[RMDB]
The record gives the reactivity of an RNA of 177 nucleotides to DMS and 2A3.
RNA sequence: GGGAACGACUCGAGUAGAGUCGAAAAGAUAUGGAUCAAAGGGAGCAGUGGUCGGAAACGACCAUACUGCGAAGAACUUUAUCCUAAGUCAAACGGCUUACACUUCGUUCGCGAAGUGUAAGCCGAACCAUUAUUAUUGGUUCGCCAAUAAUAAUGGAAAAGAAACAACAACAACAAC
Reactivity to DMS in 0.01 (KOAc 150mM, MgCl2 10mM, bicine 150mM(pH8.5), 24C), signal-to-noise 4, nucleotides 027 to 126: g000a010u000a060u010g000g000a010u000c300a020a000a010g000g010g000a030g020c000a010g010u000g000g000u000c000g020g000a020a020a040c000g000a010c000c000a040u000a020c010u010g010c000g010a100a150g000a080a210c010u000u000u000a050u000c000c000u000a020a110g000u000c000a080a100a270c010g000g020c010u000u000a000c000a010c000u000u000c000g030u010u020c220g020c020g010a010a010g030u010g000u000a000a000g000c000c000g000a010a020
Reactivity to 2A3 in 0.01 (KOAc 150mM, MgCl2 10mM, bicine 150mM(pH8.5), 24C), signal-to-noise 3, nucleotides 027 to 126: g020a000u030a000u050g000g010a000u030c150a010a000a000g020g000g010a010g000c000a000g020u010g000g010u000c000g000g010a010a000a010c000g000a000c010c010a010u100a030c010u000g000c000g060a140a020g000a010a010c000u000u010u010a010u000c000c000u010a020a000g020u000c040a110a040a100c030g000g010c010u010u010a010c010a000c020u000u000c010g110u060u130c300g030c040g110a010a000g000u000g000u010a000a020g000c010c000g000a000a000
The RNA was probed in 150 mM KOAc, 10 mM MgCl2 and 150 mM bicine (pH 8.5) at 24 C.
It was measured as part of the RMDB library TTRDEL.